This 177-nucleotide RNA was probed chemically with DMS and 2A3. It was measured as part of the RMDB libraries RFM100 and RFMREP. 2A3 adducts were read by reverse transcription with SuperScript II with manganese.
RNA sequence: GGGAACGACUCGAGUAGAGUCGAAAAGGGAGGGAAGCGGAUGGGGGCUGGCGAUGCGCCCCGGUCGUAUGCGGAACGGCUUCUGCUGGUCCGCCGAUCGGCUCGGGGCGUGGACUGUUGUCGGCCGAGUGUACAAAUAGUUCGCUAUUUGUACACUAAAAGAAACAACAACAACAAC
Reactivity to DMS in 0.01 (KOAc 150mM, MgCl2 10mM, bicine 150mM(pH8.5), 24C), signal-to-noise 5, nucleotides 027 to 126: g010g000g020a140g000g000g000a160a160g010c190g000g000a150u030g000g010g000g000g000c010u010g000g000c020g000a120u010g010c000g000c010c000c000c000g010g000u000c010g000u010a150u030g010c010g000g000a010a010c000g010g010c000u010u040c300u020g010c000u000g000g010u000c000c010g010c000c060g000a090u020c020g010g000c000u050c030g030g000g010g010c000g010u000g000g010a120c150u000g000u020u010g010u000c000g010g000c000c020g000
Reactivity to 2A3 in 0.01 (KOAc 150mM, MgCl2 10mM, bicine 150mM(pH8.5), 24C), signal-to-noise 9, nucleotides 027 to 126: g050g060g050a230g050g010g050a100a070g060c090g060g080a140u130g100g020g000g000g000c020u020g010g000c020g020a040u130g010c000g000c000c000c000c000g000g000u010c010g000u070a020u160g000c000g000g000a010a020c000g010g000c000u160u110c130u300g000c000u020g010g010u000c000c000g000c000c000g040a090u070c000g000g010c050u090c070g000g000g000g000c000g000u000g000g010a010c020u040g010u040u030g010u010c010g020g000c000c010g010